[RMDB]
This 177-nucleotide RNA was probed chemically with DMS. Conditions: 150 mM KOAc, 10 mM MgCl2 and 150 mM bicine (pH 8.5), 24 C. It was measured as part of the RMDB library TTRINS. For DMS, 868 sequencing reads were counted.
RNA sequence: GGGAACGACUCGAGUAGAGUCGAAAAGAUAUGGACGGAGAACUACUCCGAAAGUGAGCGUUGAAAGCCUGUAAAUCGGAAACGAUUUACAGGCUGGAGCUCAUGAGUAGGAGCUCCGUCCUAAGUCGACAAAGCUAAACUUCGGUUUAGCUUUGUCAAAAGAAACAACAACAACAAC
Reactivity to DMS in 0.01 (KOAc 150mM, MgCl2 10mM, bicine 150mM(pH8.5), 24C), signal-to-noise 1, nucleotides 027 to 126: g000a070u000a280u020g000g000a010c000g040g010a010g010a110a030c040u010a300c000u000c000c010g000a020a120a230g010u010g000a020g010c010g010u000u010g010a300a190a080g000c010c000u000g000u010a000a120a000u000c000g010g010a140a060a220c010g010a010u000u000u000a010c000a010g000g000c000u000g000g000a040g010c000u000c000a000u000g000a090g010u000a140g010g000a010g010c010u000c000c000g000u000c000c010u000a010a040g010u000c100